[RMDB]
RNA sequence: GGGAACGACUCGAGUAGAGUCGAAAAAUAAUAGCCUUCGACGUACGGAAACCAUCCUACCUGACGUACGGAAACCAUCCAAGGUUAGAGUCACUUAAGGUCGUGGUAAUCCGAGCAUAUGCAUACAUCAGCAUGCGAAAGGAUGGAUCCAUAACGUCCAUGUUCCAGAAUUCGUUCUGGAACAUGGAAAAGAAACAACAACAACAAC
Reactivity to 2A3 in 0.01 (KOAc 150mM, MgCl2 10mM, bicine 150mM(pH8.5), 24C), signal-to-noise 5, nucleotides 027 to 156: a000u190a010a010u080a070g070c000c000u120u110c070g060a040c020g010u080a020c070g020g030a030a080a110c020c000a010u030c030c010u040a090c010c060u070g080a050c060g030u100a030c000g030g030a050a030a020c010c010a010u110c030c020a010a050g040g000u050u060a050g040a020g110u100c070a050c130u080u090a140a110g020g000u100c060g030u040g030g010u050a070a060u010c000c000g010a010g000c030a020u100a040u270g030c030a040u070a210c020a090u110c040a040g040c010a020u080g020c040g070a260a060a000g020g000a000u010g000g000a020u000c000c010a020u060a200a010c010g060u030
Reactivity to DMS in 0.01 (KOAc 150mM, MgCl2 10mM, bicine 150mM(pH8.5), 24C), signal-to-noise 1, nucleotides 027 to 156: a060u000a160a170u010a110g050c010c010u000u000c100g040a080c000g060u010a070c020g010g010a110a030a050c000c000a130u020c050c040u000a100c000c030u000g000a190c030g050u000a060c030g070g010a200a170a160c010c020a100u020c070c050a050a040g030g000u000u020a010g000a190g030u000c100a110c020u000u010a090a050g010g040u000c060g070u000g030g000u000a070a180u000c000c000g030a180g000c070a020u000a060u000g010c010a190u000a050c030a150u000c110a140g040c020a010u000g010c010g090a090a120a110g000g040a040u030g010g000a300u000c000c000a090u010a090a090c000g030u000